Description
Source: RMDB library OK1LIB, as collected in RNAgym. The record gives the reactivity of an RNA of 177 nucleotides to 2A3. The 2A3 profile rests on 315 reads. Values cover nucleotides 27 to 126. For 2A3 the reverse transcriptase was SuperScript II with manganese.
[RMDB]
RNA sequence: GGGAACGACUCGAGUAGAGUCGAAAAGUCGAUGAACCGGCGCUGCUGUCCCGGGCGCUCACGGCCUGCGGCUUGAUCGCGGUAGCGGUAGCUCGCGCCGAUGCGGCCGCGUCUUAUUUCGCCGAGGGGCCGAGUGGUCAUUCGUGACCACUCGGCCAAAAGAAACAACAACAACAAC
Reactivity to 2A3 in 0.01 (KOAc 150mM, MgCl2 10mM, bicine 150mM(pH8.5), 24C), signal-to-noise 1, nucleotides 027 to 126: g130u060c020g040a240u250g000a060a020c040c010g000g000c000g020c110u220g000c000u090g010u080c050c020c000g000g070g010c040g000c040u080c070a050c140g060g000c000c150u300g050c060g000g000c020u140u130g010a250u210c050g000c000g040g000u130a190g000c000g060g020u110a030g000c070u150c110g050c000g000c070c090g030a020u050g000c010g010g000c000c020g000c000g000u000c090u000u040a070u010u070u140c000g000c000c000g090a050g040g070